[RMDB]
RNA sequence: GGGAACGACUCGAGUAGAGUCGAAAACUCAGUCGCAGAGCGCCGCUGGAUCGACUGGCCUCCGGUGGAAAACGAAGAUUCGUCUUCAAUUUCUGUAACCGGACCGGUCUCCUUCGGCCGCCGAGCGCAUAUCGCCUUGGUUCGCCAAGGCGAUAUGAAAAGAAACAACAACAACAAC
Reactivity to DMS in 0.01 (KOAc 150mM, MgCl2 10mM, bicine 150mM(pH8.5), 24C), signal-to-noise 1, nucleotides 027 to 126: c000u000c030a100g050u000c000g000c000a030g000a300g000c000g010c000c000g000c080u000g000g010a030u000c190g000a000c000u000g030g000c020c130u000c010c010g000g040u000g000g000a040a000a000a020c300g000a000a000g010a020u000u010c160g010u000c000u000u000c010a020a300u020u000u000c020u000g000u000a070a090c000c000g000g000a060c010c000g000g020u000c000u000c000c010u000u000c000g000g000c060c100g020c000c000g020a300g000c010g000